[RMDB]
RNA sequence: GGGAACGACUCGAGUAGAGUCGAAAACUGGUGGAAGUGCCCGCGGUGGACCUGAGCUCGGGCAACAUCGACUUCGAGGGUACCCUGCGCGUCAAGGGCGACAUCACCGCCGGCAUGCACGUGCGGACCUAUCCCGAGGUUUCGACCUCGGGAUAGGAAAAGAAACAACAACAACAAC
Reactivity to DMS in 0.01 (KOAc 150mM, MgCl2 10mM, bicine 150mM(pH8.5), 24C), signal-to-noise 2, nucleotides 027 to 126: c040u000g020g010u010g020g000a160a130g030u000g020c000c000c220g010c050g000g010u000g000g020a120c020c010u020g000a220g000c020u000c090g020g000g010c040a030a050c160a070u000c020g000a190c220u010u000c030g000a060g000g000g010u000a070c070c030c000u020g060c020g010c020g030u010c060a080a090g010g000g030c020g000a100c210a090u010c040a070c030c020g000c020c180g010g000c020a040u010g000c150a040c070g030u020g000c030g000g000a150
Reactivity to 2A3 in 0.01 (KOAc 150mM, MgCl2 10mM, bicine 150mM(pH8.5), 24C), signal-to-noise 1, nucleotides 027 to 126: c010u050g000g000u060g080g110a290a120g050u000g030c000c000c050g000c040g010g000u030g020g010a040c010c010u000g070a010g030c010u000c010g020g020g020c000a000a010c010a050u070c020g060a100c060u200u050c150g050a050g050g100g030u100a070c000c000c000u020g000c030g000c060g150u110c070a150a120g020g000g000c050g060a030c030a120u130c000a020c000c000g000c000c010g010g070c010a030u070g030c060a030c050g080u130g000c070g060g020a080
Conditions: 150 mM KOAc, 10 mM MgCl2 and 150 mM bicine (pH 8.5), 24 C. Structure probing data (DMS and 2A3) for a 177-nucleotide construct. 2A3 adducts were read by reverse transcription with SuperScript II with manganese. For DMS, 1,463 sequencing reads were counted. It was measured as part of the RMDB library OK2TST.